[RMDB]
RNA sequence: GGGAACGACUCGAGUAGAGUCGAAAAUCUUGCAGCAGCCAGACUGCCUUCCGGGUCACUGCCAUGGAGGAGCCGCAGUCAGAUCCUAGCGUCGAGCCCCCUCUGAGUCAGGAAACAUUUUCAGACCCUGUAAAAGUGAAUUCGUUCACUUUUACAGAAAAGAAACAACAACAACAAC
Reactivity to DMS in 0.01 (KOAc 150mM, MgCl2 10mM, bicine 150mM(pH8.5), 24C), signal-to-noise 7, nucleotides 027 to 126: u010c020u000u000g010c050a050g010c050a060g000c040c050a080g010a120c030u010g000c010c030u000u000c050c040g000g000g020u000c090a090c110u020g000c010c050a090u040g000g010a120g000g010a170g010c060c090g000c040a050g000u000c020a090g000a070u010c040c040u010a100g010c030g010u010c040g010a110g000c020c010c010c010c010u000c020u010g000a090g000u000c020a070g010g000a090a090a100c110a080u020u010u010u010c030a080g010a200c130c050
Reactivity to 2A3 in 0.01 (KOAc 150mM, MgCl2 10mM, bicine 150mM(pH8.5), 24C), signal-to-noise 9, nucleotides 027 to 126: u030c010u030u090g030c030a050g000c010a010g030c030c010a040g040a110c020u040g020c010c000u070u020c020c020g040g000g020u060c070a050c170u130g010c030c010a120u170g040g030a050g030g030a020g030c020c020g010c020a010g020u060c010a010g020a060u050c000c020u030a040g020c010g050u040c020g030a040g000c000c000c000c010c000u010c030u040g050a050g040u030c020a010g040g030a030a080a040c060a100u070u050u030u040c020a030g020a110c010c000

This 177-nucleotide RNA was probed chemically with DMS and 2A3.
The 2A3 profile rests on 19,563 reads.
For 2A3 the reverse transcriptase was SuperScript II with manganese.
The reactions ran in a buffer of 150 mM KOAc, 10 mM MgCl2 and 150 mM bicine (pH 8.5), at 24 C.